[RMDB]
RNA sequence: GGGAACGACUCGAGUAGAGUCGAAAAGCAUUGAACAGAAAACUGGAAAACGCUCAACUAAGAGUAAGCUUGAUUCUUAGGCUCUCGUUUAAUGCGGAAAGAGAGAGACAGGGAAACCUGUCGAAAAGGGAUUAGUAUACUUCGGUAUACUAAUCCCAAAAGAAACAACAACAACAAC
Reactivity to 2A3 in 0.01 (KOAc 150mM, MgCl2 10mM, bicine 150mM(pH8.5), 24C), signal-to-noise 7, nucleotides 027 to 126: g000c000a000u000u010g000a000a010c000a010g020a030a110a000a040c030u030g020g000a000a010a020a030c060g010c000u030c050a100a200c100u170a260a050g030a020g100u060a110a020g040c040u070u110g100a070u140u000c010u100u280a010g010g030c020u000c000u010c020g000u000u000u000a000a000u010g000c010g020g020a080a140a000g130a000g010a000g000a010g000a000c000a000g000g000g030a000a040a090c000c000u000g000u000c000g000a000a000a010a020
Reactivity to DMS in 0.01 (KOAc 150mM, MgCl2 10mM, bicine 150mM(pH8.5), 24C), signal-to-noise 5, nucleotides 027 to 126: g020c000a010u000u000g000a010a010c020a030g020a010a030a070a090c030u000g000g010a000a030a170a130c180g030c010u000c070a090a100c100u010a130a100g030a160g010u000a050a090g000c040u000u010g010a190u000u010c000u010u040a040g000g010c110u000c010u000c160g040u010u010u010a000a000u000g000c000g000g010a050a020a050g000a090g000a120g010a190g000a030c000a000g000g000g020a170a050a160c010c000u010g010u000c000g000a020a030a050a140